[RMDB]
RNA sequence: GGGAACGACUCGAGUAGAGUCGAAAAUGCUGGUAGUACUACGGUACUACCAGCAUAAUUCGUGGUUCGAAAACCUCCCACGCAAAAAAACUAAGGAAAAACGCCGAGUAGUACGCUACUCGGCGAAGGUACCGGAAUCAGUUCGCUGAUUCCGGAAGACCAGAUAUUAGUUCGCUAAUAUCUGGUCAAAAGAAACAACAACAACAAC
Reactivity to 2A3 in 0.01 (KOAc 150mM, MgCl2 10mM, bicine 150mM(pH8.5), 24C), signal-to-noise 2, nucleotides 027 to 156: u010g000c010u000g000g010u000a000g030u010a000c000u000a030c250g020g000u000a000c000u010a000c000c000a000g000c000a000u000a000a010u050u010c020g000u020g010g030u020u110c070g060a060a060a120a220c000c000u030c020c010c000a020c020g080c030a020a090a050a050a060a010a060c150u230a080a150g020g060a130a120a020a020a010c010g000c000c000g010a000g000u000a000g000u010a000c110g020c070u000a000c000u010c010g000g010c000g000a000a000g010g010u030a040c010c010g000g000a000a000u000c000a010g070u070u100c140g000c190u010g000a000u010u000c000c000g000g000a000a000